[RMDB]
RNA sequence: GGGAACGACUCGAGUAGAGUCGAAAACAUCACCCUAUCCUUUUUCUUUCAAACCUGGUUGAGGGAACCUACACUUUUCACCUGAAAGUGACCGAUGCAAAGGGUGAGAGUGACACAGACCGGACCACCAUAUCGCACAUUUCGAUGUGCGAUAUGGAAAAGAAACAACAACAACAAC
Reactivity to DMS in 0.01 (KOAc 150mM, MgCl2 10mM, bicine 150mM(pH8.5), 24C), signal-to-noise 2, nucleotides 027 to 126: c090a100u020c140a080c020c000c000u000a100u000c030c010u000u020u010u000u020c020u020u000u000c090a050a070a160c110c020u010g020g000u000u000g020a140g000g010g020a060a200c140c040u000a270c020a010c020u000u030u000u000c020a040c050c040u010g000a120a060a190g010u010g010a050c100c080g010a120u000g020c110a080a070a120g020g000g030u020g000a030g020a030g010u000g010a120c170a060c110a020g010a050c020c020g000g000a050c030c060a120
Reactivity to 2A3 in 0.01 (KOAc 150mM, MgCl2 10mM, bicine 150mM(pH8.5), 24C), signal-to-noise 2, nucleotides 027 to 126: c020a060u090c070a140c020c000c000u020a110u130c040c030u140u090u010u070u100c010u060u100u050c100a120a140a070c040c000u050g000g040u010u080g010a120g090g030g050a010a020c000c020u050a030c020a030c040u020u150u100u030c010a020c050c000u050g020a120a070a080g040u040g120a100c100c130g100a060u300g060c020a070a040a020g020g000g000u020g000a000g000a000g000u040g030a010c070a010c000a120g040a020c000c020g020g040a020c010c000a040